[RMDB]
RNA sequence: GGGAACGACUCGAGUAGAGUCGAAAAGCAGUGUUAUUCCUUGGAUUUUUUCGGAGGAGUAAAAAUACUCCUUAACUUUUUUAGGAGGAGUGAAAUAUGGAAAUCAUGGAAGUAGGAAUAUAGAAAAACGUGGAAACAUUUUCGAAUGUUUCCACGUAAAAGAAACAACAACAACAAC
Reactivity to DMS in 0.01 (KOAc 150mM, MgCl2 10mM, bicine 150mM(pH8.5), 24C), signal-to-noise 1, nucleotides 027 to 126: g000c100a040g000u010g010u030u010a000u000u000c000c000u000u030g000g000a010u000u000u030u030u000u010c000g010g030a010g000g000a030g060u030a000a080a050a160a040u000a010c040u000c000c000u000u000a000a110c010u000u030u050u020u010u130a120g000g000a010g000g010a080g000u020g000a070a030a040u030a110u000g000g010a020a140a080u020c020a080u010g010g000a060a100g040u000a030g000g000a050a030u010a080u030a080g030a080a090a110a100
Reactivity to 2A3 in 0.01 (KOAc 150mM, MgCl2 10mM, bicine 150mM(pH8.5), 24C), signal-to-noise 2, nucleotides 027 to 126: g090c070a030g030u100g070u240u100a030u010u010c000c000u010u060g100g000a100u020u080u070u080u150u130c110g110g040a030g000g030a020g010u060a000a000a000a200a070u140a000c000u000c000c000u020u060a040a030c000u010u170u160u070u140u150a040g030g080a000g000g010a000g020u060g100a030a210a030u100a020u020g070g100a000a110a080u130c030a020u060g050g140a020a040g020u070a030g030g020a060a000u120a020u100a130g270a170a110a040a000

Chemical mapping of a 177-nucleotide RNA with DMS and 2A3. It was measured as part of the RMDB library OK1LIB. For DMS the reverse transcriptase was MarathonRT. For DMS, 1,479 sequencing reads were counted.